RNA sequence: GGGAACGACUCGAGUAGAGUCGAAAAACGACCACUUCGGUGGAGAAGUUUGCACAGAGUGUAAACGAGGUACGUAACAUGACCGAAGAGGCCAAGAAGGUCGCGCAAGAUUUGGUUAGUGUUACCAACAAGUGUGGUGAUUCGUCACCACACUUGUAAAAGAAACAACAACAACAAC
Reactivity to 2A3 in 0.01 (KOAc 150mM, MgCl2 10mM, bicine 150mM(pH8.5), 24C), signal-to-noise 3, nucleotides 027 to 126: a000c030g040a040c010c010a020c030u070u090c220g120g000u030g030g030a080g060a050a030g010u010u000u020g030c060a030c090a120g300a080g150u000g000u040a000a000a030c010g000a030g010g090u220a040c060g000u010a000a000c010a060u050g040a020c000c010g000a040a020g020a050g040g000c010c000a070a100g230a140a040g100g000u010c040g000c020g000c120a110a070g010a250u060u060u040g020g010u040u020a110g050u040g030u100u040a010c020c020a020
Reactivity to DMS in 0.01 (KOAc 150mM, MgCl2 10mM, bicine 150mM(pH8.5), 24C), signal-to-noise 3, nucleotides 027 to 126: a140c050g010a180c010c010a030c000u000u010c140g000g010u000g000g000a110g020a060a220g000u000u010u000g000c010a030c020a270g020a140g020u000g010u000a000a000a000c010g000a100g040g020u010a050c210g030u000a000a020c010a060u010g020a000c000c000g000a010a060g010a160g010g010c010c010a060a150g000a070a120g020g020u000c010g000c150g020c150a100a120g000a220u000u010u000g000g000u000u000a040g030u010g000u000u000a000c020c160a080
Source information: An RNA of 177 nucleotides, treated with 2A3 and DMS and read out base by base. Values are in units of 0.01, from 0 to 300, in steps of 10.